[RMDB]
Structure probing data (DMS and 2A3) for a 177-nucleotide construct. Values are in units of 0.01, from 0 to 300, in steps of 10. Conditions: 150 mM KOAc, 10 mM MgCl2 and 150 mM bicine (pH 8.5), 24 C. Reactivities are given for positions 27 through 126. Source: RMDB library TTRDEL, as collected in RNAgym. DMS adducts were read by reverse transcription with MarathonRT.
RNA sequence: GGGAACGACUCGAGUAGAGUCGAAAAGAUAUGGACGAGAGCCAACAGCCAUGUGUCGGAAACGACACUGUGGACAUGGCUCGUCCUAAGUCAAACCAUUUGUCCGCCUUCGGGCGGACAAAUGGAAGUACUCCAGGUAGUUCGCUACCUGGAGUACAAAAGAAACAACAACAACAAC
Reactivity to DMS in 0.01 (KOAc 150mM, MgCl2 10mM, bicine 150mM(pH8.5), 24C), signal-to-noise 1, nucleotides 027 to 126: g000a040u000a300u000g000g000a070c000g010a140g000a080g000c000c000a010a160c180a170g000c020c030a000u000g000u000g010u000c000g000g000a090a060a100c040g000a020c000a000c010u030g080u000g000g000a060c050a300u000g000g010c000u000c010g000u030c000c010u000a020a110g000u000c030a150a080a180c010c020a010u000u000u010g000u000c000c000g000c000c000u000u040c130g030g050g040c010g030g000a000c000a000a010a000u000g030g020a030a030
Reactivity to 2A3 in 0.01 (KOAc 150mM, MgCl2 10mM, bicine 150mM(pH8.5), 24C), signal-to-noise 1, nucleotides 027 to 126: g040a010u080a060u160g000g000a000c040g020a030g020a040g300c000c020a090a070c150a250g040c000c000a020u040g020u020g000u000c000g050g020a100a050a020c000g000a010c020a030c070u080g050u020g010g030a060c070a120u050g010g000c000u000c010g000u000c000c000u000a080a030g040u000c060a100a040a060c010c000a010u000u010u000g010u020c050c040g030c120c030u030u080c300g160g000g000c000g000g000a020c000a000a000a010u000g040g010a000a000